[RMDB]
RNA sequence: GGGAACGACUCGAGUAGAGUCGAAAAUGGUAAGGGGCAUGGGUUGCUGGAAGAGCUCUUCCUUCCCGAGUGAGCCAAGCCGGGCUCUCCUGGCGCCAGGGCCUGAGCCGCAGCCACACCACAGCCGCACUUCAUUUAUGUUCGCAUAAAUGAAGUGAAAAGAAACAACAACAACAAC
Reactivity to DMS in 0.01 (KOAc 150mM, MgCl2 10mM, bicine 150mM(pH8.5), 24C), signal-to-noise 8, nucleotides 027 to 126: u010g000g020u010a080a140g010g000g020g020c050a080u010g010g010g020u000u000g030c030u010g010g000a080a080g000a150g000c030u000c010u000u000c050c070u000u000c020c030c060g010a110g010u010g010a050g010c020c030a100a150g040c050c050g020g000g000c150u000c220u000c030c020u000g010g020c030g020c060c070a040g000g010g000c020c020u000g000a110g020c020c020g010c070a170g000c010c020a050c090a140c040c020a070c100a090g000c060c090g000
Reactivity to 2A3 in 0.01 (KOAc 150mM, MgCl2 10mM, bicine 150mM(pH8.5), 24C), signal-to-noise 5, nucleotides 027 to 126: u090g020g020u080a130a110g100g000g030g000c040a030u060g010g010g100u120u190g210c020u020g000g050a100a060g050a110g030c010u010c000u060u090c010c020u050u080c010c010c010g010a040g110u090g020a000g010c020c010a060a010g010c030c000g030g000g000c050u030c030u060c050c010u010g020g010c030g030c020c010a010g010g010g010c000c010u010g020a020g010c000c040g090c030a010g010c020c000a040c010a020c000c010a060c020a030g060c030c030g050